[RMDB]
RNA sequence: GGGAACGACUCGAGUAGAGUCGAAAAGGCAUGUAAGAUAAAUAUACCUGCAUGUUAGUCUUAGGUUCUGAUAGAAAUGACAUGCAAUUAUGCUGCCAUUUUUUACUAUCAGGACUCGACUGGUGUGGUUAACGUAGUUCUUCGGAACUACGUUAACAAAAGAAACAACAACAACAAC
Reactivity to DMS in 0.01 (KOAc 150mM, MgCl2 10mM, bicine 150mM(pH8.5), 24C), signal-to-noise 3, nucleotides 027 to 126: g020g010c010a010u000g010u010a050a080g030a110u010a050a150a160u010a140u010a060c040c030u010g000c020a010u000g000u000u010a010g010u010c000u010u010a180g000g000u000u000c000u000g000a010u000a020g010a040a010a010u000g010a010c000a010u010g040c010a100a170u000u010a070u000g020c010u000g000c000c000a000u000u000u000u020u010u000a300c020u000a000u000c000a000g000g000a000c000u010c300g010a010c010u000g020g010u000g030u020g010
Reactivity to 2A3 in 0.01 (KOAc 150mM, MgCl2 10mM, bicine 150mM(pH8.5), 24C), signal-to-noise 3, nucleotides 027 to 126: g030g000c030a000u040g010u100a160a100g040a130u160a080a300a020u200a040u040a150c010c010u000g000c000a000u010g000u030u120a010g010u000c040u030u170a020g020g020u010u020c000u000g000a000u000a010g030a020a000a020u000g000a010c010a020u210g000c020a010a030u300u120a140u220g000c000u000g010c000c000a010u060u000u010u000u020u020a050c000u010a000u000c000a000g000g010a000c000u020c030g000a000c020u050g040g020u110g040u110g170